[RMDB]
RNA sequence: GGGAACGACUCGAGUAGAGUCGAAAAUUGCGGAAAGGCCCCUCCUCACGUACAAUGCGGCCUACCAUUGAAUCGAGACGAGGCAGAUGAGCAAGGAGAGCCACAGGGUAUGUAAAGUAGUGGCGAGGACCAUAAUACGUUUCGACGUAUUAUGGUCAAAAGAAACAACAACAACAAC
Reactivity to DMS in 0.01 (KOAc 150mM, MgCl2 10mM, bicine 150mM(pH8.5), 24C), signal-to-noise 7, nucleotides 027 to 126: u010u020g010c040g010g010a060a090a080g010g000c020c050c010c030u020c030c020u000c080a100c100g010u000a090c050a060a040u020g020c070g000g010c010c030u010a080c100c040a060u010u020g010a090a080u020c030g010a100g020a080c080g010a060g000g010c040a070g010a070u010g000a080g010c060a060a050g000g010a090g000a160g000c010c020a020c020a060g010g000g000u010a050u020g010u020a060a070a110g000u010a070g020u000g000g000c020g020a110g000
Reactivity to 2A3 in 0.01 (KOAc 150mM, MgCl2 10mM, bicine 150mM(pH8.5), 24C), signal-to-noise 7, nucleotides 027 to 126: u090u060g060c050g080g050a090a060a070g100g030c020c010c000c000u010c000c000u030c010a050c020g060u080a060c060a040a050u140g040c060g020g020c010c000u030a080c040c020a030u040u130g050a050a060u080c040g000a010g030a110c040g010a060g040g000c010a010g040a100u100g010a030g070c030a040a020g050g010a070g040a000g020c020c000a010c010a020g100g070g000u140a090u150g050u080a060a050a120g070u100a020g020u030g040g010c010g010a050g040